[RMDB]
RNA sequence: GGGAACGACUCGAGUAGAGUCGAAAAGUGUGGGUUCUGUUGUGUUUGUAUGAGAAUGCUUCAAGUCUGCGACCCCUGAUGAUCCUUAGAGCCACUUAAUACUUGUGCCCCAAUUCUCAAAUGUAGCCAUUCAUUACACAGUUAGUUUUAAAGGGAGUAUUAUAGGCGAGUUCGCUCGCCUAUAAUAAAAAGAAACAACAACAACAAC
Reactivity to DMS in 0.01 (KOAc 150mM, MgCl2 10mM, bicine 150mM(pH8.5), 24C), signal-to-noise 2, nucleotides 027 to 156: g020u010g030u000g010g050g040u000u010c050u000g020u020u000g010u010g030u010u000u000g020u010a150u010g020a110g020a040a080u000g000c000u000u000c040a040a100g010u000c020u010g020c080g010a140c020c000c010c030u000g010a100u000g010a060u000c030c030u000u010a100g010a100g000c000c040a040c070u000u000a080a100u010a060c030u000u000g020u000g010c030c010c030c030a060a150u000u000c010u000c030a040a060a100u000g020u000a090g020c040c040a120u000u000c050a070u000u010a020c060a090c060a080g000u000u010a090g010u010u010u000u000a050a060a100g010g000g020a120g020
Reactivity to 2A3 in 0.01 (KOAc 150mM, MgCl2 10mM, bicine 150mM(pH8.5), 24C), signal-to-noise 2, nucleotides 027 to 156: g060u060g000u080g050g000g000u070u000c040u010g060u130u030g070u020g070u060u060u040g100u080a140u100g020a060g010a170a020u120g040c000u060u040c030a030a030g020u000c030u060g060c070g030a080c010c010c000c000u030g040a070u090g000a060u060c030c040u060u120a060g010a030g070c010c010a030c030u050u070a070a040u080a160c060u060u100g020u070g070c000c010c010c000a020a050u070u050c050u010c000a090a080a000u070g000u060a010g000c020c040a030u070u050c010a010u050u110a020c060a000c000a090g020u040u140a040g010u000u080u040u060a090a070a000g020g030g000a080g060

An RNA of 207 nucleotides, treated with DMS and 2A3 and read out base by base. For DMS the reverse transcriptase was MarathonRT. It was measured as part of the RMDB library OK3TST. The 2A3 profile rests on 668 reads.